[RMDB]
RNA sequence: GGGAACGACUCGAGUAGAGUCGAAAAGAUAUGGAUGAGAACUACGCAACUGUAGCCAUCGAUCGUUCACGAAAGUCGGAAACGACUUUCGUGAACGGGAGGCUACUAGUUGCGCUCAUCCUAAGUCGUGAAUAGUACGGUUCGCCGUACUAUUCACAAAAGAAACAACAACAACAAC
Reactivity to 2A3 in 0.01 (KOAc 150mM, MgCl2 10mM, bicine 150mM(pH8.5), 24C), signal-to-noise 1, nucleotides 027 to 126: g120a040u220a060u240g000g000a000u050g000a010g010a210a150c300u300a070c300g010c010a000a000c000u020g000u000a000g000c020c000a240u280c020g050a070u100c010g000u000u000c020a000c040g030a000a010a000g020u010c030g000g150a180a070a120c050g000a000c100u030u010u000c000g000u010g000a000a000c010g000g040g000a010g020g000c000u050a000c000u050a010g020u020u000g000c000g020c010u000c000a000u000c000c000u040a110a000g120u060c110
Reactivity to DMS in 0.01 (KOAc 150mM, MgCl2 10mM, bicine 150mM(pH8.5), 24C), signal-to-noise 1, nucleotides 027 to 126: g030a130u000a300u010g000g000a010u000g000a010g000a070a140c160u030a300c010g020c000a010a020c000u000g020u000a010g000c020c010a300u010c240g000a030u040c010g020u000u000c000a000c000g010a040a020a030g000u000c000g060g020a070a020a220c010g000a040c000u000u000u000c010g020u000g010a000a000c000g010g030g000a040g000g000c000u000a000c000u000a000g020u000u000g000c010g000c000u000c010a000u000c000c000u010a040a110g000u000c040
The data come from the RNA Mapping Database (RMDB), library TTRINS. Chemical mapping of a 177-nucleotide RNA with 2A3 and DMS. 2A3 is a SHAPE reagent: it acylates the 2'-hydroxyl of flexible nucleotides of all four kinds. For DMS the reverse transcriptase was MarathonRT. For 2A3 the reverse transcriptase was SuperScript II with manganese. For DMS, 1,074 sequencing reads were counted.